[RMDB]
RNA sequence: GGGAACGACUCGAGUAGAGUCGAAAAUGGAACGUCGCGGUCUUGAGCUUGCGUUCUUCUUCAAUGUUACUGAUAAACGCCGUCUCGACCAGAAUAGACGGAAUAUCGGGCGCCUUUAACACCGCAAAUUAAUCCCACUAUUCGUAGUGGGAUUAAUAAAAGAAACAACAACAACAAC
Reactivity to DMS in 0.01 (KOAc 150mM, MgCl2 10mM, bicine 150mM(pH8.5), 24C), signal-to-noise 7, nucleotides 027 to 126: u030g020g020a080a050c070g020u020c220g010c040g010g000u000c060u020u000g010a100g010c140u010u000g000c030g000u000u000c030u020u010c070u000u020c110a120a090u030g000u010u030a120c070u020g000a030u010a030a060a100c300g000c010c050g000u020c000u000c160g000a160c140c150a160g020a110a110u020a040g010a010c000g000g000a070a080u010a030u000c030g000g000g000c090g000c050c070u000u010u010a070a080c100a080c040c010g000c040a060a090
Reactivity to 2A3 in 0.01 (KOAc 150mM, MgCl2 10mM, bicine 150mM(pH8.5), 24C), signal-to-noise 9, nucleotides 027 to 126: u160g020g010a040a010c030g020u050c060g040c030g010g030u040c030u070u210g040a050g050c030u080u080g020c020g010u010u010c000u020u020c020u090u090c040a110a160u160g040u170u130a090c040u020g010a020u020a040a160a020c080g030c020c010g020u010c010u010c030g200a200c070c040a040g110a110a100u150a040g010a000c000g000g020a030a010u040a020u030c010g000g020g000c020g020c000c010u060u150u090a050a020c030a010c020c000g020c030a030a120